Chemical mapping of a 207-nucleotide RNA with 2A3.
For 2A3 the reverse transcriptase was SuperScript II with manganese.
The RNA was probed in 150 mM KOAc, 10 mM MgCl2 and 150 mM bicine (pH 8.5) at 24 C.
Reactivities are rounded to 0.1 and cut off at 0 and 3.
For 2A3, 398 sequencing reads were counted.
RNA sequence: GGGAACGACUCGAGUAGAGUCGAAAAGAACUUUGGCCGGCUCGGAAUAGAAUCAGGGGGUGCAAACUGCCCACUGGCAGAAAGGAUUAUAGCAAAUGCGUUCCCUAUUGCAAUACAGCCCGGCCAACAUAGACUACUCUAUUCGUAGAGUAGUCAAUACUCCUUGCUACUUCGGUAGCAAGGAGUAAAAAGAAACAACAACAACAAC
Reactivity to 2A3 in 0.01 (KOAc 150mM, MgCl2 10mM, bicine 150mM(pH8.5), 24C), signal-to-noise 1, nucleotides 027 to 156: g050a120a070c000u040u010u010g000g000c000c000g000g030c060u050c020g160g050a170a030u290a200g040a100a000u120c030a150g020g000g000g000g000u000g040c020a000a000a060c000u000g040c000c070c030a150c100u140g000g040c080a070g010a100a110a010g060g040a060u120u080a120u250a220g170c050a000a260a000u020g060c000g020u000u020c000c000c000u000a050u000u090g030c020a020a030u050a090c000a040g000c010c000c000g000g000c000c000a000a000c050a050u090a110g020a000c000u000a000c000u000c000u020a000u000u020c090g040u150a010g000a000g000u000a000g000u000c000a000a000